[RMDB]
RNA sequence: GGGAACGACUCGAGUAGAGUCGAAAAUUGUCUCUGCAUCAGGUUUCCGCCUUUGGUGUUAUAAGACCUUUGAUAUUUAUAAUCUCUGGUCUACUUUUACAAAAGUUCAAGGUUUGGAAAACAUUGCGUCCUAGUGCGUUCGCGCACUAGAAAAGAAACAACAACAACAAC
Reactivity to DMS in 0.01 (KOAc 150mM, MgCl2 10mM, bicine 150mM(pH8.5), 24C), signal-to-noise 3, nucleotides 027 to 129: u060u030g060u030c040u000c050u040g000c040a070u030c180a000g010g060u050u020u000c030c000g050c000c000u040u030u020g000g000u060g020u070u050a120u010a000a000g030a020c030c010u020u060u000g020a040u060a110u000u000u000a140u030a020a050u000c000u030c030u020g040g020u030c010u050a040c040u070u030u020u080a110c230a080a070a070a020g010u030u040c030a010a050g020g040u010u130u060g000g000a000a010a040a090c030a080u000u000g020c000g070u050c110
Reactivity to 2A3 in 0.01 (KOAc 150mM, MgCl2 10mM, bicine 150mM(pH8.5), 24C), signal-to-noise 7, nucleotides 027 to 129: u050u080g090u020c010u000c020u030g000c000a050u030c070a050g000g090u010u010u020c000c000g000c000c000u090u060u160g080g010u100g060u170u040a170u030a140a000g000a000c000c000u000u000u000g030a020u030a080u070u300u040a210u160a200a070u000c000u000c000u040g000g000u000c000u010a010c000u020u080u080u060a090c070a080a140a070a090g030u030u080c010a030a010g030g000u070u210u150g230g020a020a020a000a000c020a030u010u050g000c020g020u060c010